[RMDB]
RNA sequence: GGGAACGACUCGAGUAGAGUCGAAAAACGCUGGGGCUUUGUGGGACAUUACAGUUAUAAACAAUGUGGACAAUGAAAUUGUUAAGUCUUCAGAUGUUGUAGACAGCAAUGAAAAUUUAACAUGGCCGUACGCCCCUCUUCGGAGGGGCGAAAAGAAACAACAACAACAAC
Reactivity to DMS in 0.01 (KOAc 150mM, MgCl2 10mM, bicine 150mM(pH8.5), 24C), signal-to-noise 2, nucleotides 027 to 129: a020c070g010c040u040g130g010g000g000c000u000u160u020g010u030g040g020g070a120c080a060u000u050a080c050a000g000u070u020a010u050a000a000a000c150a000a000u040g000u000g000g020a090c060a050a050u040g040a130a060a080u060u000g000u020u010a050a010g050u000c050u000u000c010a000g010a150u030g000u020u030g000u000a160g010a060c000a020g000c020a020a040u020g000a000a110a100a050u000u000u010a010a010c030a040u010g030g010c050c030g030u050a030
Reactivity to 2A3 in 0.01 (KOAc 150mM, MgCl2 10mM, bicine 150mM(pH8.5), 24C), signal-to-noise 2, nucleotides 027 to 129: a170c020g000c020u050g000g020g000g060c060u100u000u090g050u100g020g010g010a010c010a000u050u160a090c000a030g190u090u150a140u020a090a000a000c000a050a000u220g010u070g080g000a000c000a040a030u270g010a020a020a020u130u000g000u070u020a080a100g000u020c000u000u000c000a010g000a300u010g050u140u120g000u080a030g000a060c010a000g000c060a070a000u010g000a050a000a030a060u000u060u010a010a020c000a000u000g000g000c000c040g080u030a020